[RMDB]
RNA sequence: GGGAACGACUCGAGUAGAGUCGAAAAGGAACGUUGUUCGCAACGUUCCGUGGCGGAAACGGACAUGACGAUCGCGCGCAUGUCGGGAAACCGUAAACGCGAGCAUCAUGGUGUUCGCACCAUGAAAUUAGCUUGCCCAUUUCGAUGGGCAAGCUAAAAAAGAAACAACAACAACAAC
Reactivity to 2A3 in 0.01 (KOAc 150mM, MgCl2 10mM, bicine 150mM(pH8.5), 24C), signal-to-noise 1, nucleotides 027 to 126: g000g000a020a000c010g000u010u000g000u070u160c210g000c080a000a000c000g000u000u020c000c000g000u020g040g000c040g050g020a190a160a050c040g100g000a010c020a030u010g060a100c000g070a110u110c040g040c020g000c010g000c110a010u010g000u040c010g020g050g010a140a110a110c020c000g000u140a100a090a000c060g010c050g060a000g010c010a080u020c000a000u020g000g000u030g010u000u050c200g060c030a000c030c000a000u050g000a020a000a020
Reactivity to DMS in 0.01 (KOAc 150mM, MgCl2 10mM, bicine 150mM(pH8.5), 24C), signal-to-noise 1, nucleotides 027 to 126: g000g010a020a000c000g000u050u010g020u010u000c180g030c020a000a040c010g010u000u000c000c010g000u000g010g020c010g040g000a040a030a190c080g020g010a090c000a010u000g000a080c010g010a120u000c100g010c080g000c060g030c010a060u000g010u000c040g000g010g010a080a050a200c090c020g000u000a050a060a050c050g000c000g000a010g010c280a240u010c000a000u000g020g010u000g000u000u020c100g010c000a030c000c000a020u010g000a020a110a100